[RMDB]
RNA sequence: GGGAACGACUCGAGUAGAGUCGAAAAGAUAUGGACUCUGACCUUUUGACGUACUUCAAUCGGAAACGAUUGUACGAUAAGGUCUGAGUCCUAAGUCAAAAGACCAGUCUCUUCGGAGACUGGUCAACACUUUAUUUCGGUUCGCCGAAAUAAAGUGAAAAGAAACAACAACAACAAC
Reactivity to 2A3 in 0.01 (KOAc 150mM, MgCl2 10mM, bicine 150mM(pH8.5), 24C), signal-to-noise 4, nucleotides 027 to 126: g010a000u030a010u040g010g000a000c010u020c020u030g010a010c010c000u040u140u210u300g300a060c010g000u010a020c020u130u270c110a060a030u000c000g000g000a020a000a010c010g010a000u020u030g000u000a010c010g140a180u130a300a020g000g000u000c000u000g010a000g000u000c000c000u000a000a000g000u010c010a020a050a060a070g010a000c000c000a000g010u010c000u000c000u040u170c300g110g000a000g000a000c000u000g000g000u000c000a000a000
Reactivity to DMS in 0.01 (KOAc 150mM, MgCl2 10mM, bicine 150mM(pH8.5), 24C), signal-to-noise 4, nucleotides 027 to 126: g000a010u000a100u000g000g000a000c000u000c000u000g000a000c000c000u000u000u010u010g010a170c050g010u000a010c070u000u010c250a050a010u000c010g010g000a040a020a060c000g010a020u000u000g000u000a000c000g010a140u000a050a010g010g000u000c000u000g000a010g000u000c000c000u000a000a040g010u000c010a080a110a130a110g000a010c000c000a000g000u000c000u000c000u000u020c220g020g000a020g000a000c000u000g000g010u000c000a020a070

An RNA of 177 nucleotides, treated with 2A3 and DMS and read out base by base.
DMS adducts were read by reverse transcription with MarathonRT.
The RNA was probed in 150 mM KOAc, 10 mM MgCl2 and 150 mM bicine (pH 8.5) at 24 C.